Structure probing data (2A3 and DMS) for a 177-nucleotide construct. Source: RMDB library OK2TST, as collected in RNAgym. 2A3 adducts were read by reverse transcription with SuperScript II with manganese. The RNA was probed in 150 mM KOAc, 10 mM MgCl2 and 150 mM bicine (pH 8.5) at 24 C.

RNA sequence: GGGAACGACUCGAGUAGAGUCGAAAACUUCGGUGUACAGCGAAAGAAUGAAGGAAGUCGUACUCAAAUGAUCAUGGGGCUCAAAGACCACUUAGGCUCCAUUGGCUCAAAUGAUCAUGGGGCCCAAGCCACUACUAUCAUUCGUGAUAGUAGUGGCAAAAGAAACAACAACAACAAC
Reactivity to 2A3 in 0.01 (KOAc 150mM, MgCl2 10mM, bicine 150mM(pH8.5), 24C), signal-to-noise 3, nucleotides 027 to 126: c010u090u060c060g050g010u090g020u040a080c080a040g030c030g050a070a070a080g060a060a100u180g040a060a020g080g030a040a020g020u050c030g020u050a050c010u020c060a110a100a110u050g000a020u030c000a030u050g000g000g010g000c030u010c130a070a090a000g020a070c000c010a040c090u120u160a090g000g020c050u030c000c000a020u020u020g000g000c010u000c040a190a240a160u090g010a010u020c010a010u020g010g000g020g000c000c010c010a040a010
Reactivity to DMS in 0.01 (KOAc 150mM, MgCl2 10mM, bicine 150mM(pH8.5), 24C), signal-to-noise 3, nucleotides 027 to 126: c070u000u000c050g010g000u010g020u000a060c110a040g030c070g010a060a060a090g020a140a060u000g010a090a080g010g000a100a060g010u000c020g000u000a080c020u000c060a090a130a060u000g010a030u000c030a030u000g000g000g000g000c010u000c060a020a060a090g000a110c030c040a140c290u010u000a090g000g020c120u010c020c020a070u000u000g000g000c030u000c020a020a090a050u000g000a030u000c010a020u010g000g000g000g030c060c010c070a040a110